[RMDB]
RNA sequence: GGGAACGACUCGAGUAGAGUCGAAAAGGCAGACUAGCUAGCGGAUCCGAUCCAUGGUGGAUCCGGUACCUCGUACCUAGCGAUCACAUGGAUCUCUAGGCUGACUCUGAUCCAUGCAUGGAGUACGGUAAGAACUGAUUUUCGAAUCAGUUCUUACAAAAGAAACAACAACAACAAC
Reactivity to 2A3 in 0.01 (KOAc 150mM, MgCl2 10mM, bicine 150mM(pH8.5), 24C), signal-to-noise 9, nucleotides 027 to 126: g060g000c020a020g020a150c060u070a030g050c020u030a020g060c050g080g040a060u030c030c020g020a070u000c010c010a010u090g200g170u040g300g000a000u000c000c000g000g000u050a040c010c060u110c100g030u050a070c000c010u020a020g020c030g060a010u010c010a060c050a250u160g220g000a000u000c000u000c000u020a020g010g000c010u020g020a040c020u000c020u100g020a020u000c000c010a020u080g210c020a040u050g030g020a030g060u100a070c080g040
Reactivity to DMS in 0.01 (KOAc 150mM, MgCl2 10mM, bicine 150mM(pH8.5), 24C), signal-to-noise 9, nucleotides 027 to 126: g010g010c030a050g010a090c080u010a050g020c100u000a070g020c070g000g000a100u010c060c060g000a080u000c010c010a010u000g010g020u000g010g000a010u000c010c100g000g010u000a030c100c150u000c200g020u000a090c010c010u000a060g010c120g010a020u000c010a150c160a060u010g010g000a010u000c000u000c020u000a020g010g010c110u000g000a050c070u010c040u000g000a060u000c000c010a040u000g010c040a050u000g000g010a060g010u010a060c180g010